[RMDB]
RNA sequence: GGGAACGACUCGAGUAGAGUCGAAAAAAAAGUGCACAUAGAUCCUCAGCCCAGUCCAGAAGUGGGGAGCAGGGCUCAAUCAGCCUCAGAGGAAGCUAUAGACAUGUGGGAUACGAAAAACAUUUACUUGAUCCCCUGCUAGGCAUCAGGCAUCAGGUCAAAGCUAGUUCUUCGGAACUAGCUUUGAAAAAGAAACAACAACAACAAC
Reactivity to 2A3 in 0.01 (KOAc 150mM, MgCl2 10mM, bicine 150mM(pH8.5), 24C), signal-to-noise 1, nucleotides 027 to 156: a000a000a000a000g020u110g000c040a010c020a090u060a030g020a100u060c000c000u020c080a030g000c000c000c000a000g010u050c000c050a040g000a220a020g230u060g010g000g020g020a010g060c080a100g000g000g000c000u020c030a070a140u090c020a020g090c010c000u080c050a050g000a020g020g010a080a010g010c030u080a060u050a300g060a030c020a100u100g050u270g010g000g000a040u230a130c140g150a010a000a000a000a070c030a050u140u150u100a100c100u030u090g020a020u020c000c010c010c010u000g000c030u070a050g010g000c010a060u020c040a050g050g000c020a020u060c040a040g000g000